RNA sequence: GGGAACGACUCGAGUAGAGUCGAAAAUCGUGGCGGCGAGUACCGGCGUUGUGUACGGCAUGGCCUCGCUGACAUGUACGGGUUCAUCCCGGUUGACCGAGAGCCUGGCCUGUGGGGCGGUUACGCCGCACCUGCCGGUGUUCGCACCGGCAGGUGCAAAAGAAACAACAACAACAAC
Reactivity to DMS in 0.01 (KOAc 150mM, MgCl2 10mM, bicine 150mM(pH8.5), 24C), signal-to-noise 2, nucleotides 027 to 126: u010c050g040u020g010g030c030g000g030c010g010a060g010u020a060c020c000g000g010c030g020u000u020g040u010g020u020a070c110g000g010c010a190u000g030g000c300c010u000c040g020c050u010g020a070c060a040u010g010u010a110c020g010g010g000u000u010c230a150u010c000c020c000g010g000u000u000g000a130c080c010g000a050g010a080g010c020c010u000g000g010c020c000u000g050u000g010g000g010g000c040g020g000u000u020a100c110g010c040c030
Reactivity to 2A3 in 0.01 (KOAc 150mM, MgCl2 10mM, bicine 150mM(pH8.5), 24C), signal-to-noise 1, nucleotides 027 to 126: u140c060g010u000g120g060c050g030g030c020g000a040g020u080a070c010c010g040g010c030g050u050u200g030u060g050u130a040c070g060g010c020a110u170g000g000c000c020u010c000g010c040u070g070a020c020a030u070g090u090a040c000g000g000g060u070u240c070a090u300c000c060c040g000g020u030u070g060a110c070c000g010a020g050a000g080c040c040u090g120g000c020c020u140g030u130g000g010g090g020c000g070g000u040u070a080c080g040c010c020
An RNA of 177 nucleotides, treated with DMS and 2A3 and read out base by base.
For 2A3 the reverse transcriptase was SuperScript II with manganese.
For 2A3, 963 sequencing reads were counted.
The RNA was probed in 150 mM KOAc, 10 mM MgCl2 and 150 mM bicine (pH 8.5) at 24 C.
DMS adducts were read by reverse transcription with MarathonRT.
The data come from the RNA Mapping Database (RMDB), library OK2TST.